[RMDB]
RNA sequence: GGGAACGACUCGAGUAGAGUCGAAAAAGACAUAGGGUAGUUCCGUUUGAAAGCGCGCCCUAGUGCGCCGUUUGUCGAAAGGGAAGCCGGUUAAUAUUCCGGCACCUGGAUGUGGAUUCUCCACGGCUUAUGGCAUGCCAUUCGUGGCAUGCCAUAAAAAAGAAACAACAACAACAAC
Reactivity to 2A3 in 0.01 (KOAc 150mM, MgCl2 10mM, bicine 150mM(pH8.5), 24C), signal-to-noise 1, nucleotides 027 to 126: a000g030a000c000a070u030a000g000g010g030u010a160g070u240u020c030c030g000u010u050u050g160a190a000a000g000c070g000c000g000c020c020c020u120a120g000u000g140c010g000c030c030g000u000u020u220g220u020c060g030a190a000a000g100g020g000a130a150g000c030c030g010g010u030u010a040a000u030a260u070u000c000c000g000g000c000a000c000c060u000g020g000a040u040g010u070g050g000a100u070u070c120u000c070c000a110c050g000g040c000
Reactivity to DMS in 0.01 (KOAc 150mM, MgCl2 10mM, bicine 150mM(pH8.5), 24C), signal-to-noise 2, nucleotides 027 to 126: a110g000a000c030a020u020a300g000g000g030u000a090g000u000u010c040c040g000u030u050u000g000a050a090a020g000c060g010c010g000c000c010c230u080a070g020u000g000c050g020c120c050g010u000u000u010g030u010c030g030a050a160a060g000g000g000a050a050g000c000c000g000g000u020u000a080a100u010a170u000u030c000c010g000g020c000a010c010c060u000g000g010a210u000g040u000g000g000a120u020u010c050u000c000c080a050c120g010g000c160